[RMDB]
RNA sequence: GGGAACGACUCGAGUAGAGUCGAAAAAGCAUACCAGCUCGUACGCGAGCUGGUAUGCAAAAAUUGGUGUAGCCUUACCGUAGUAGGCACAAAAACGUCAGCUGGCUCUACGGAUCCAGCUGACGAAAAAAGUGUUUUGUGUUCGCACAAAACACAACUACGACAUAUGGUUCGCCAUAUGUCGUAGAAAAGAAACAACAACAACAAC
Reactivity to 2A3 in 0.01 (KOAc 150mM, MgCl2 10mM, bicine 150mM(pH8.5), 24C), signal-to-noise 1, nucleotides 027 to 156: a000g000c000a000u000a000c000c000a010g000c040u000c000g080u070a090c260g020c010g110a000g000c000u000g020g000u000a010u000g000c000a000a000a000a000a030u070u190g000g030u070g140u200a010g000c000c000u000u000a020c030c080g030u010a000g010u020a000g010g090c000a010c020a080a040a010a000a000c020g000u000c000a000g000c010u020g010g020c010u000c010u000a140c300g060g020a000u000c000c000a000g000c010u000g000a000c010g000a020a000a000a000a000a000g000u000g010u000u000u000u000g000u000g030u020u050c130g000c090a000c010a000a000a000a000c000a000c000a000a010
Chemical mapping of a 207-nucleotide RNA with 2A3. Conditions: 150 mM KOAc, 10 mM MgCl2 and 150 mM bicine (pH 8.5), 24 C. The data come from the RNA Mapping Database (RMDB), library M2RFPK. The 2A3 profile rests on 1,231 reads. Reactivities are rounded to 0.1 and cut off at 0 and 3.